[RMDB]
RNA sequence: GGGAACGACUCGAGUAGAGUCGAAAAACGCUAGUGUUGGGCGGAGCACGCUCGGGAAAAUCAGUGUUCGCUGAACAGCUCGUGGGGGCACAAUCGUGCCUCUACGUAGCCACGGCGCGUCCGUUUGUGCCUGCAAAUAGUUCGCUAUUUGCAGGCAAAAAGAAACAACAACAACAAC
Reactivity to 2A3 in 0.01 (KOAc 150mM, MgCl2 10mM, bicine 150mM(pH8.5), 24C), signal-to-noise 1, nucleotides 027 to 126: a000c010g080c080u040a050g020u060g030u090u040g070g000g020c030g040g010a040g100c040a000c000g050c020u080c130g000g000g070a110a190a070a160u050c030a060g020u010g080u130u050c020g000c000u000g030a070a050c020a050g010c000u010c000g000u000g000g000g000g020g030c020a000c010a020a300u220c150g010u000g000c000c000u000c000u020a000c000g020u040a000g000c000c010a040c050g020g010c010g000c020g020u020c010c000g000u000u000u130g120
Reactivity to DMS in 0.01 (KOAc 150mM, MgCl2 10mM, bicine 150mM(pH8.5), 24C), signal-to-noise 2, nucleotides 027 to 126: a060c030g000c030u000a080g030u000g020u000u010g010g010g010c010g010g000a090g010c040a060c020g020c050u000c060g000g010g010a080a040a100a080u010c060a050g000u000g000u010u020c090g010c000u010g000a050a030c110a160g000c010u000c000g020u000g000g000g000g000g000c010a010c010a110a100u000c190g010u000g010c010c010u000c000u000a000c000g000u000a000g030c000c140a220c090g000g010c020g010c060g000u000c020c010g000u000u000u000g010
Notes:
The data come from the RNA Mapping Database (RMDB), library OK2TRN. The record gives the reactivity of an RNA of 177 nucleotides to 2A3 and DMS. Values are in units of 0.01, from 0 to 300, in steps of 10. DMS adducts were read by reverse transcription with MarathonRT. The reactions ran in a buffer of 150 mM KOAc, 10 mM MgCl2 and 150 mM bicine (pH 8.5), at 24 C. Reactivities are given for positions 27 through 126.